Structure probing data (2A3 and DMS) for a 170-nucleotide construct. For 2A3 the reverse transcriptase was SuperScript II with manganese. DMS adducts were read by reverse transcription with MarathonRT.
RNA sequence: GGGAACGACUCGAGUAGAGUCGAAAAGCAUUCCCUUAACUUUGUGGGAGAGUUCGUUGUCAACGAUGUUGUCCUCGCAAUUCUCUCUGGAACCACAACUAAUGUUGACAAAAUACGCCAGCUUCUCGAAGACUCUGCUUCGGCAGAGUCAAAAGAAACAACAACAACAAC
Reactivity to 2A3 in 0.01 (KOAc 150mM, MgCl2 10mM, bicine 150mM(pH8.5), 24C), signal-to-noise 3, nucleotides 027 to 129: g040c010a110u050u010c000c000c000u020u060a160a140c050u050u050u080g130u160g020g040g000a050g000a020g000u040u000c010g040u020u080g020u070c030a000a000c010g080a080u200g030u030u000g010u020c000c020u000c060g030c020a050a120u100u000c000u000c000u000c060u050g010g010a000a010c010c040a040c060a030a020c030u150a120a070u230g040u030u060g000a010c050a000a050a000a010u160a010c000g000c000c010a000g010c000u060u030c000u010c030g030a070a010
Reactivity to DMS in 0.01 (KOAc 150mM, MgCl2 10mM, bicine 150mM(pH8.5), 24C), signal-to-noise 4, nucleotides 027 to 129: g020c160a300u050u020c070c010c090u050u050a020a170c250u030u040u000g050u010g040g040g020a060g020a130g020u010u050c140g080u000u080g010u000c000a070a010c020g020a180u000g050u000u030g010u020c050c000u030c100g000c140a100a100u060u040c140u060c000u000c060u020g040g060a080a290c080c140a090c060a040a030c090u030a100a060u070g060u000u000g030a050c110a000a000a000a000u030a110c070g070c070c030a000g010c090u020u010c020u060c050g000a110a060